[RMDB]
RNA sequence: GGGAACGACUCGAGUAGAGUCGAAAACGGGGUGCUGCGAACCAUGUGACUGGUUGCUACCGCGGCGCGGUCAUGACCUGUUGGUUUUUCGCACCCUGGGAUAUGUGGAUCAUUAUGGUCGCGCUGCGUGUAUUAUAAAAUUCGUUUUAUAAUACACAAAAGAAACAACAACAACAAC
Reactivity to DMS in 0.01 (KOAc 150mM, MgCl2 10mM, bicine 150mM(pH8.5), 24C), signal-to-noise 9, nucleotides 027 to 126: c020g000g000g010g010u000g000c010u010g010c210g000a010a010c010c010a110u050g020u040g000a100c110u000g000g010u000u000g010c160u020a070c070c040g010c010g010g010c100g010c000g000g000u000c060a020u000g000a040c040c030u010g010u010u010g000g010u000u000u000u000u020c300g000c000a000c000c000c000u000g000g000g010a120u030a020u020g010u010g010g010a070u010c050a140u030u030a080u020g010g000u000c000g000c040g000c020u000g010c160
Reactivity to 2A3 in 0.01 (KOAc 150mM, MgCl2 10mM, bicine 150mM(pH8.5), 24C), signal-to-noise 8, nucleotides 027 to 126: c000g000g000g000g000u000g000c000u030g020c040g020a000a000c000c000a020u060g050u050g130a040c040u010g010g010u010u020g000c010u030a030c010c020g000c010g090g030c070g000c000g000g010u010c000a010u030g030a030c000c010u010g090u030u080g010g000u000u000u000u010u040c010g000c000a000c000c000c000u000g010g000g010a040u050a050u110g050u050g040g000a030u040c020a030u040u200a060u190g020g000u010c010g000c000g000c020u030g010c000

Structure probing data (DMS and 2A3) for a 177-nucleotide construct. For 2A3 the reverse transcriptase was SuperScript II with manganese. Reactivities are given for positions 27 through 126. Source: RMDB library OK1LIB, as collected in RNAgym.